[RMDB]
RNA sequence: GGGAACGACUCGAGUAGAGUCGAAAAGACUGGGAUCGUGUAUUUUGGCUGUAAAUUGGAGCACUUUCCCAGAAAUUGAAACAUUUUGUGUUAUAGAACAGCCGAUCAAACGGAAUCUUACUUGGUCGAUAAUGGGCUACUUCGGUAGCCCAUUAUCAAAAGAAACAACAACAACAAC
Reactivity to DMS in 0.01 (KOAc 150mM, MgCl2 10mM, bicine 150mM(pH8.5), 24C), signal-to-noise 1, nucleotides 027 to 126: g000a110c000u000g000g000g000a010u000c000g020u000g010u000a300u000u000u000u000g000g000c000u000g020u010a000a000a030u000u050g110g040a070g000c020a000c010u000u000u000c000c000c060a020g000a000a080a020u020u020g000a170a090a060c070a240u000u000u000u000g070u010g000u000u020a020u030a050g020a110a030c000a050g040c090c000g020a100u000c000a030a010a060c100g010g000a140a050u000c130u000u000a110c140u000u010g050g000u040c000
Reactivity to 2A3 in 0.01 (KOAc 150mM, MgCl2 10mM, bicine 150mM(pH8.5), 24C), signal-to-noise 2, nucleotides 027 to 126: g070a040c010u000g000g000g000a010u010c020g010u000g000u010a120u050u020u040u070g000g020c000u090g140u300a000a000a210u090u130g100g020a050g060c000a000c010u000u010u000c000c000c020a000g020a040a010a010u110u150g060a180a080a000c070a070u090u100u080u240g130u020g030u060u040a100u060a140g030a010a000c000a010g000c020c000g000a030u040c050a080a000a120c080g090g020a090a100u030c000u090u060a190c010u030u030g060g020u060c080